Source: RMDB library RNAMAK, as collected in RNAgym. Structure probing data (2A3 and DMS) for a 207-nucleotide construct.
[RMDB]
RNA sequence: GGGAACGACUCGAGUAGAGUCGAAAAGCGAAGUUCGCUUCGCAUAAUUGAUAUGGACACGGUGCCAGAAUUGCAUAACGAAGAACUCGGAAACGAGGGAGUUAUGGCAAUUCGGUAAUACCGUGUCCUAAGUCGACUGAGGACUUUCGAGUCCUAAGUAACAAGCGGUUUUCGAACCGCUUGUUACAAAAGAAACAACAACAACAAC
Reactivity to 2A3 in 0.01 (KOAc 150mM, MgCl2 10mM, bicine 150mM(pH8.5), 24C), signal-to-noise 4, nucleotides 027 to 156: g000c000g010a020a000g020u070u150c150g100c100u000u000c010g000c010a020u190a100a080u080u110g010a010u020a030u150g010g010a010c010a000c010g000g020u020g030c070c110a230g020a000a000u010u020g000c010a010u000a000a000c000g130a300a080g030a070a010c020u000c000g010g050a090a050a050c010g000a010g000g020g010a050g010u000u020a010u020g180g090c010a010a000u000u000c010g010g000u030a080a030u060a060c020c000g000u000g000u000c010c000u000a000a000g010u000c000g010a080c080u150g090a060g030g010a010c000u080u100u060c220g080a010g000u000c000c000u020a080a060
Reactivity to DMS in 0.01 (KOAc 150mM, MgCl2 10mM, bicine 150mM(pH8.5), 24C), signal-to-noise 1, nucleotides 027 to 156: g000c030g020a010a060g030u000u000c300g020c010u000u000c000g040c030a110u000a070a050u000u000g000a120u000a300u000g010g030a000c000a000c020g010g000u000g000c040c020a300g050a000a010u000u000g000c000a050u010a000a050c010g040a120a300g040a110a080c000u000c010g000g020a230a180a300c030g010a000g000g000g010a210g020u000u000a010u000g060g010c000a000a030u000u000c000g080g000u010a040a110u000a090c150c020g000u000g000u020c010c000u000a020a070g000u010c000g060a080c000u000g000a100g000g000a040c010u000u000u010c190g010a060g000u000c000c000u000a000a100

The RNA was probed in 150 mM KOAc, 10 mM MgCl2 and 150 mM bicine (pH 8.5) at 24 C. For 2A3 the reverse transcriptase was SuperScript II with manganese.